[RMDB]
RNA sequence: GGGAACGACUCGAGUAGAGUCGAAAAUUGUCAGGUUAUCCACAGGAGAAGUGUUGCUUUGCUUUCAAAACCAGCAAAUGCAAUUUAUGGAGGAUUGAUUUACUUGAUAGACAAGAUAAGUGCAUCCACGUAAGUGAGCAUUCGUGCUCACUUACGUAAAAGAAACAACAACAACAAC
Reactivity to 2A3 in 0.01 (KOAc 150mM, MgCl2 10mM, bicine 150mM(pH8.5), 24C), signal-to-noise 3, nucleotides 027 to 126: u080u020g020u020c010a020g050g010u080u050a020u000c020c010a040c020a020g110g180a080g060a200a040g120u060g000u150u020g000c020u060u010u000g000c030u050u070u200c160a120a110a040a060c040c030a010g000c000a030a020a060u160g030c020a000a040u070u060u100a150u130g110g020a080g040g010a000u020u080g070a050u060u110u110a050c010u010u000g020a020u050a090g080a050c040a150a000g010a130u120a140a020g040u080g120c030a040u030c010c000
Reactivity to DMS in 0.01 (KOAc 150mM, MgCl2 10mM, bicine 150mM(pH8.5), 24C), signal-to-noise 4, nucleotides 027 to 126: u000u000g010u000c050a060g010g010u000u010a090u000c020c030a080c060a110g000g020a090g000a100a060g000u020g010u000u010g010c010u000u000u000g000c010u000u000u020c150a070a060a090a180c300c240a020g020c010a000a020a010u000g020c040a030a030u000u000u010a080u010g000g010a150g020g010a040u010u010g020a050u000u010u000a050c030u010u000g010a100u000a090g020a120c090a030a060g000a080u000a040a050g010u000g010c080a080u000c040c070